Chemical mapping of a 207-nucleotide RNA with 2A3 and DMS. The reactions ran in a buffer of 150 mM KOAc, 10 mM MgCl2 and 150 mM bicine (pH 8.5), at 24 C. For 2A3, 2,741 sequencing reads were counted.
RNA sequence: GGGAACGACUCGAGUAGAGUCGAAAAGAAGGAAGCUUCGACUUCUCUCAGGACUGACUCUCUUCCUGAAGAGUCAGUCUCAGCUAGAGUCUCCUUCUCGAGACUUCCUUCGACUAGGAGAGAUCUCGAUCAGCUUCAGGAGACUAGCUGAGACUUCAGUGUCGUAUAUCUUCGGAUAUACGACACUAAAAGAAACAACAACAACAAC
Reactivity to 2A3 in 0.01 (KOAc 150mM, MgCl2 10mM, bicine 150mM(pH8.5), 24C), signal-to-noise 4, nucleotides 027 to 156: g080a030a030g060g010a050a020g040c050u180u150c140g110a160c080u050u010c100u000c020u010c060a050g020g100a030c020u020g020a020c010u020c000u040c030u120u060c050c030u100g060a130a030g000a010g020u020c010a000g000u000c000u010c000a000g010c000u040a040g010a100g210u010c000u000c000c000u060u050c020u000c020g010a020g000a010c000u020u040c010c000u060u100c140g150a160c120u110a040g020g020a090g010a040g030a240u010c000u010c000g050a070u050c050a040g100c050u300u180c040a000g000g000a000g010a010c000u000a000g000c000u000g010a000g000a010c000u070u050c060
Reactivity to DMS in 0.01 (KOAc 150mM, MgCl2 10mM, bicine 150mM(pH8.5), 24C), signal-to-noise 2, nucleotides 027 to 156: g000a130a020g010g000a110a070g000c020u010u000c110g010a110c040u000u000c010u000c000u010c000a170g010g010a100c010u010g000a030c010u000c000u020c020u000u000c050c060u050g000a220a090g000a050g000u010c000a030g010u000c000u000c030a050g020c000u000a020g000a100g020u000c000u000c000c000u000u000c100u000c040g020a040g000a060c020u000u010c010c000u000u010c070g030a290c100u010a060g050g000a110g010a070g000a120u000c010u000c010g000a080u000c090a190g010c090u000u010c080a060g000g020a040g020a080c010u000a020g020c010u000g010a040g000a140c040u000u000c060